RNA sequence: GGGAACGACUCGAGUAGAGUCGAAAAGUAAGUGUAUUCAUCAUAAUGCAAAGUAUGCCGCUUUUGAGAUAGUUAGGCUUGAUGACGCGUUGAAUCACACACCGUUGAUUCGCUUCUCGGUCUGCCGCUCUAAUCCGGAGUUCGCUCCGGAUUAGAGAAAAGAAACAACAACAACAAC
Reactivity to 2A3 in 0.01 (KOAc 150mM, MgCl2 10mM, bicine 150mM(pH8.5), 24C), signal-to-noise 2, nucleotides 027 to 126: g070u100a180a040g010u030g040u080a060u000u060c030a080u050c000a070u150a250a060u210g020c030a070a050a050g080u100a110u170g000c000c000g060c070u040u070u140u210g220a200g050a050u130a080g080u210u160a020g000g040c000u020u150g140a110u090g030a030c070g020c010g010u030u110g040a020a000u010c020a010c000a000c000a060c050c050g020u020u070g010a050u050u020c010g050c040u080u000c000u010c010g000g000u010c030u080g000c020c020g010
Reactivity to DMS in 0.01 (KOAc 150mM, MgCl2 10mM, bicine 150mM(pH8.5), 24C), signal-to-noise 2, nucleotides 027 to 126: g030u000a050a090g030u010g020u000a050u010u010c080a050u000c040a090u000a120a080u010g000c050a060a090a140g000u010a050u000g010c020c060g030c020u010u000u000u000g000a160g000a080u020a020g020u010u000a040g020g000c010u000u000g000a070u000g030a100c230g000c070g000u020u010g000a030a030u000c030a020c030a060c150a090c150c100g010u010u010g000a080u000u000c010g000c080u000u000c020u000c020g020g010u000c010u000g000c030c050g000